[RMDB]
RNA sequence: GGGAACGACUCGAGUAGAGUCGAAAAGGACAAUAGUCCAUCGAUCCAUUCAGGAAUGCCUAUCGCAACGAAGGCUAUGAGUUGACAAGCGUUGCGAUAAGGUUAGGCAAGGUGAAAUUGCGACCUGGUAUGUAGAUUGUUUCGACAAUCUACAUACAAAAGAAACAACAACAACAAC
Reactivity to DMS in 0.01 (KOAc 150mM, MgCl2 10mM, bicine 150mM(pH8.5), 24C), signal-to-noise 8, nucleotides 027 to 126: g000g000a020c000a190a130u030a090g020u000c000c000a080u030c170g000a130u030c010c010a120u040u050c030a020g000g000a160a060u020g000c010c000u000a030u000c000g000c000a000a020c000g010a100a110g010g000c060u010a060u040g010a150g020u020u020g000a120c080a060a090g020c020g000u000u000g010c000g000a000u010a030a050g000g010u000u000a050g010g010c010a020a030g010g040u030g010a070a110a110u010u000g010c000g000a100c020c010u000g000
Reactivity to 2A3 in 0.01 (KOAc 150mM, MgCl2 10mM, bicine 150mM(pH8.5), 24C), signal-to-noise 9, nucleotides 027 to 126: g010g000a030c060a080a300u140a240g010u000c000c000a020u080c070g030a020u020c010c010a040u120u200c030a010g040g040a120a080u140g000c000c000u000a000u000c000g000c000a000a000c010g070a160a060g110g000c010u060a160u140g190a130g150u200u130g060a090c040a080a040g030c020g000u000u000g000c000g000a000u030a080a040g010g000u010u060a040g030g000c020a020a000g080g020u230g130a110a110a210u060u030g000c010g020a050c000c000u040g050
This 177-nucleotide RNA was probed chemically with DMS and 2A3. 2A3 adducts were read by reverse transcription with SuperScript II with manganese. Reactivities are given for positions 27 through 126. Values are in units of 0.01, from 0 to 300, in steps of 10.